[RMDB]
RNA sequence: GGGAACGACUCGAGUAGAGUCGAAAAAUACACCAGCAGUAGGACUCAGCGACCGUCACAACAAGGUUGUGCUGGUAUCCGACGAUCGUAUAGCCCUGUCUUGCAGGUUGCCUUGCACUGACGUGCCACACCAUUUACAGAUUCGUCUGUAAAUGAAUCUUUGGUUAAGAUUCGUCUUAACCAAAGAAAAAGAAACAACAACAACAAC
Reactivity to 2A3 in 0.01 (KOAc 150mM, MgCl2 10mM, bicine 150mM(pH8.5), 24C), signal-to-noise 7, nucleotides 027 to 156: a000u120a010c060a020c020c010a010g000c020a010g020u130a030g020g030a020c010u020c080a020g000c010g020a010c020c000g040u060c030a060c050a190a140c060a190a110g070g010u030u020g040u070g040c020u020g030g010u020a060u020c030c030g020a020c010g020a040u030c030g000u070a040u060a120g000c000c010c000u030g020u070c040u050u100g010c020a020g040g000u080u130g050c010c010u030u060g000c010a040c070u100g050a040c070g030u050g020c020c010a100c020a030c020c020a000u010u000u000a000c000a000g010a020u010u100c120g090u000c090u000g000u010a000a000a000u010g010a020a040
Reactivity to DMS in 0.01 (KOAc 150mM, MgCl2 10mM, bicine 150mM(pH8.5), 24C), signal-to-noise 6, nucleotides 027 to 156: a140u000a090c060a170c030c010a060g010c030a070g020u000a050g020g010a050c010u000c090a160g010c010g000a020c010c000g020u010c030a180c100a110a090c120a090a080g020g020u000u010g030u000g010c010u000g010g010u000a050u000c040c030g020a050c030g010a020u000c030g020u000a220u010a050g010c010c000c000u000g000u000c030u000u000g020c020a090g020g000u000u000g010c020c070u000u000g010c010a070c040u010g020a110c130g010u000g010c020c070a100c060a130c120c000a020u000u000u000a010c000a010g000a080u000u010c300g020u000c010u000g010u000a010a010a020u000g000a070a090